[RMDB]
RNA sequence: GGGAACGACUCGAGUAGAGUCGAAAACUUGAUCGUCCGAGAGGGGGCCAAGUGGCUUCGCUUUGAUCUUAAAAUUGCUGCUCCAAAGGGAAGACUUGAAGAGAGAAACACCUGUGAUUAACGACCACUCCUUAACUUUGUUCGCAAAGUUAAGGAGAAAAGAAACAACAACAACAAC
Reactivity to DMS in 0.01 (KOAc 150mM, MgCl2 10mM, bicine 150mM(pH8.5), 24C), signal-to-noise 2, nucleotides 027 to 126: c060u000u020g000a060u000c070g040u020c050c050g010a040g010a180g010g030g000g000g020c050c030a070a070g020u010g010g020c090u000u010c030g010c040u000u010u010g020a060u000c060u000u000a060a060a080a090u010u010g040c070u000g000c060u000c040c050a050a070a130g020g020g000a080a060g040a130c050u010u020g000a090a100g020a140g010a070g030a030a100a030c060a040c040c040u000g030u010g000a070u010u010a050a030c080g010a160c160c120a140
Reactivity to 2A3 in 0.01 (KOAc 150mM, MgCl2 10mM, bicine 150mM(pH8.5), 24C), signal-to-noise 1, nucleotides 027 to 126: c010u000u060g010a030u050c050g070u080c130c020g080a030g020a030g090g020g000g060g000c010c000a100a040g100u070g090g000c000u000u050c090g010c050u020u020u090g010a020u020c000u040u140a050a150a050a050u150u110g050c000u030g000c000u040c090c040a030a030a010g000g030g000a020a020g020a030c020u080u080g060a060a010g070a020g010a000g080a040a010a070c000a010c010c010u030g040u040g020a150u140u060a030a010c030g030a010c050c000a020